Conditions: 150 mM KOAc, 10 mM MgCl2 and 150 mM bicine (pH 8.5), 24 C. The record gives the reactivity of an RNA of 207 nucleotides to 2A3 and DMS. For DMS, 2,395 sequencing reads were counted. For 2A3 the reverse transcriptase was SuperScript II with manganese. The data come from the RNA Mapping Database (RMDB), library M2RFPK.

[RMDB]
RNA sequence: GGGAACGACUCGAGUAGAGUCGAAAAACGGUGCGGAAGUUCGCGCUUCCGUGAAACGCGAAAAUGGGACGGUGGCUGCAAGUCGCAUCGCAAAACCGCGGCAAGUGGAGUUAGCGAGAGGAGGCUGAAACCAUCCAACACUUCGGUGUUGGAUGAACAGCGUAAAUAGCUUCGGCUAUUUACGCUGAAAAGAAACAACAACAACAAC
Reactivity to 2A3 in 0.01 (KOAc 150mM, MgCl2 10mM, bicine 150mM(pH8.5), 24C), signal-to-noise 2, nucleotides 027 to 156: a020c040g020g020u070g010c010g020g020a010a040g090u060u160c080g010c030g000c030u050u000c000c010g010u040g020a060a070a050c100g010c030g070a020a010a010a170u060g010g020g030a010c050g020g000u040g000g010c030u020g050c040a050a040g020u070c010g000c060a080u030c030g030c030a080a060a000a010c030c040g020c000g050g000c090a130a030g020u090g070g020a060g020u080u110a020g040c060g050a050g010a030g020g020a030g030g020c030u020g030a120a010a010c040c000a000u000c000c010a000a010c000a000c000u020u030c140g100g000u000g000u000u000g000g000a000u000g000a000a010
Reactivity to DMS in 0.01 (KOAc 150mM, MgCl2 10mM, bicine 150mM(pH8.5), 24C), signal-to-noise 1, nucleotides 027 to 156: a030c040g040g000u010g000c020g000g020a040a050g000u000u010c160g050c220g040c000u000u020c000c150g030u020g010a040a060a060c010g010c010g000a020a080a080a100u000g020g020g010a030c090g010g000u000g060g050c050u000g010c090a090a150g020u000c010g040c020a190u010c030g040c030a070a070a060a200c060c010g000c060g000g020c070a040a090g020u000g000g010a070g030u000u010a150g020c050g010a090g010a090g000g020a050g030g000c030u000g000a100a100a260c090c010a000u000c010c000a010a020c000a020c000u020u000c300g090g020u000g000u000u000g010g010a000u030g010a040a120